[RMDB]
RNA sequence: GGGAACGACUCGAGUAGAGUCGAAAAGCCCAGAAGCCUCCCCUCAAAAUCGUUUCAGUCCAAAAUUGAUUCGGCGGCCCUGUCAUGAGGCCGAAACGAAGGCACGUACCCCUUCGAAUGGCGACGGAACUUUCAGUCGUAUUCGUACGACUGAAAAGAUAGUCGCCUUAUUCGUAAGGCGACUAUCAAAAGAAACAACAACAACAAC
Reactivity to 2A3 in 0.01 (KOAc 150mM, MgCl2 10mM, bicine 150mM(pH8.5), 24C), signal-to-noise 1, nucleotides 027 to 156: g020c030c010c020a010g160a110a020g100c000c040u020c000c000c010c000u040c030a060a030a030a030u040c000g000u000u010u030c030a040g000u050c040c040a080a060a090a130u050u030g010a060u090u000c020g050g030c000g010g000c040c000c000u040g000u050c010a070u040g010a030g080g000c010c000g000a000a000a000c000g000a000a000g000g000c060a010c210g140u190a160c030c010c010c000u000u000c000g000a000a020u010g030g000c010g020a060c090g060g010a100a080c010u030u010u000c000a000g000u000c000g000u000a010u000u070c110g030u000a010c000g000a000c000u000g010a000a000a000a000
Reactivity to DMS in 0.01 (KOAc 150mM, MgCl2 10mM, bicine 150mM(pH8.5), 24C), signal-to-noise 2, nucleotides 027 to 156: g040c000c020c010a120g000a110a140g010c050c000u000c010c010c000c000u010c030a090a100a100a090u010c030g030u000u020u000c010a070g060u020c040c080a100a070a140a140u000u000g000a140u000u010c030g010g010c030g030g000c010c030c000u000g020u000c190a150u010g010a080g010g030c010c010g010a010a040a070c040g010a050a040g010g020c040a140c080g000u010a130c040c050c010c020u010u020c020g020a090a090u000g010g000c020g020a070c050g000g000a050a070c110u000u000u000c010a020g000u000c000g040u000a020u000u010c270g040u000a000c000g000a010c000u000g000a010a000a030a080